[RMDB]
Structure probing data (2A3 and DMS) for a 207-nucleotide construct. For 2A3 the reverse transcriptase was SuperScript II with manganese. It was measured as part of the RMDB library RSTRND.

RNA sequence: GGGAACGACUCGAGUAGAGUCGAAAAUUCGAAAGGAUUGAUUUGGCAUCAGGUUAAUGGCCUCGAGUAUCGUAAUAACCGUGAAGAUUGGGUAAUCCGCAGCCAAGUGCUAAACAAGUAUUGGUAAACUCUACUUGCAUGCUAAUGGUUCACAGACGAACCUCGUAAGGUUCGCCUUACGAGGUUCAAAAGAAACAACAACAACAAC
Reactivity to 2A3 in 0.01 (KOAc 150mM, MgCl2 10mM, bicine 150mM(pH8.5), 24C), signal-to-noise 4, nucleotides 027 to 156: u010u010c010g020a020a020a030g040g000a020u010u020g060a040u060u090u090g040g020c060a130u040c060a110g100g030u120u130a140a050u230g050g020c010c000u000c000g010a020g020u080a060u120c010g000u010a090a060u040a160a130c030c010g000u010g080a070a060g030a060u060u090g000g000g010u020a090a020u020c000c020g000c050a000g010c000c000a080a030g080u060g040c050u110a070a080a000c020a020a010g020u030a020u060u120g030g000u110a100a100a130c000u000c000u010a000c000u000u010g000c020a020u120g010c010u060a120a030u050g050g000u020u110c070a050c010a070g080a020c080
Reactivity to DMS in 0.01 (KOAc 150mM, MgCl2 10mM, bicine 150mM(pH8.5), 24C), signal-to-noise 2, nucleotides 027 to 156: u000u010c040g030a140a120a190g000g010a030u000u000g000a130u000u000u000g000g000c020a150u000c060a050g000g020u000u010a090a090u000g020g000c060c040u000c060g000a100g000u000a060u000c030g030u010a110a110u010a080a070c030c010g040u000g000a080a110g000a090u000u000g000g000g030u000a060a140u000c020c020g050c040a100g020c000c020a010a140g010u000g050c020u030a060a070a030c040a000a060g000u000a070u000u030g000g000u000a100a040a160c030u010c020u000a020c000u000u000g000c010a300u000g000c010u000a130a170u000g010g030u000u000c050a040c050a120g000a110c120